[RMDB]
RNA sequence: GGGAACGACUCGAGUAGAGUCGAAAAGUGAGUGUGGAUCGUGUGAUCGACGAGGCACUGGCACGCAAUGUGUUGGCCGCCGAUAAUGCGGGCAUUGAACUCAACCGUGGCAAACCAUGCAAUGCGACGCGUAUGCAGGGUUCGCCCUGCAUACGCGAAAAGAAACAACAACAACAAC
Reactivity to DMS in 0.01 (KOAc 150mM, MgCl2 10mM, bicine 150mM(pH8.5), 24C), signal-to-noise 1, nucleotides 027 to 126: g020u000g000a050g040u000g020u020g010g000a120u010c030g050u000g030u000g020a050u000c010g000a040c080g010a080g010g000c060a160c070u020g010g000c040a040c040g050c180a130a050u020g010u000g020u000u000g000g020c070c010g010c010c010g000a030u010a070a000u000g000c030g010g010g000c000a080u020u000g000a080a030c080u010c020a010a120c050c090g010u000g000g040c020a020a090a110c050c040a000u000g000c080a080a040u040g000c040g040a160
Reactivity to 2A3 in 0.01 (KOAc 150mM, MgCl2 10mM, bicine 150mM(pH8.5), 24C), signal-to-noise 1, nucleotides 027 to 126: g050u010g000a040g010u000g000u100g010g120a250u040c080g030u040g030u050g090a110u050c020g050a070c000g020a080g050g000c060a020c250u070g100g030c090a000c020g030c060a050a300u200g050u010g030u000u020g000g000c000c010g020c020c000g000a020u050a050a040u130g030c000g040g000g070c020a010u080u060g090a060a010c020u000c040a080a050c010c000g040u030g020g000c050a020a040a210c020c000a050u110g050c080a100a120u140g020c080g100a010